[RMDB]
RNA sequence: GGGAACGACUCGAGUAGAGUCGAAAAGGAUGAUCUGGUCCCGGCCAGUUAUCCGAAUUAGUACCGGGAUUGCAUCGUCGAGCCGUCAGGGGCGAAGACGAGAACCUGAAAGCACGAAGCACUGGGCGGUGCGUGUGCGAGAUAUAACGCCCAACAAAAUCACCUAUCCAUUCGUGGAUAGGUGAUUAAAAGAAACAACAACAACAAC
Reactivity to 2A3 in 0.01 (KOAc 150mM, MgCl2 10mM, bicine 150mM(pH8.5), 24C), signal-to-noise 3, nucleotides 027 to 156: g020g000a000u030g010a010u070c030u080g010g000u010c000c000c000g020g010c000c010a000g000u030u000a010u000c010c000g010a060a080u170u080a110g080u060a100c010c000g000g000g020a050u050u180g060c050a070u000c020g000u010c010g020a010g000c010c010g100u230c130a050g120g090g000g060c020g020a060a020g000a000c010g000a000g000a010a020c030c040u120g110a170a040a000g010c010a010c030g050a080a020g020c010a000c040u050g010g000g010c000g020g000u030g000c010g030u110g000u000g030c030g080a010g050a000u220a020u010a140a050c040g000c010c000c020a020a020c070a010a130
Reactivity to DMS in 0.01 (KOAc 150mM, MgCl2 10mM, bicine 150mM(pH8.5), 24C), signal-to-noise 3, nucleotides 027 to 156: g000g000a060u000g000a010u000c010u000g030g020u000c020c110c120g010g020c010c000a060g020u010u000a020u000c030c050g010a080a080u010u010a150g030u000a090c020c030g050g010g010a120u010u000g010c070a170u010c040g020u000c020g000a300g020c010c010g000u010c160a180g030g030g030g040c010g010a110a300g000a080c020g000a100g030a060a100c000c030u000g010a110a080a160g030c020a060c010g010a130a160g040c060a090c050u000g000g010g010c050g000g000u000g000c000g020u000g040u010g000c000g030a060g030a080u000a100u010a100a080c000g000c000c010c000a040a120c220a120a130

The record gives the reactivity of an RNA of 207 nucleotides to 2A3 and DMS. The RNA was probed in 150 mM KOAc, 10 mM MgCl2 and 150 mM bicine (pH 8.5) at 24 C. Values cover nucleotides 27 to 156. For 2A3, 2,560 sequencing reads were counted. 2A3 adducts were read by reverse transcription with SuperScript II with manganese.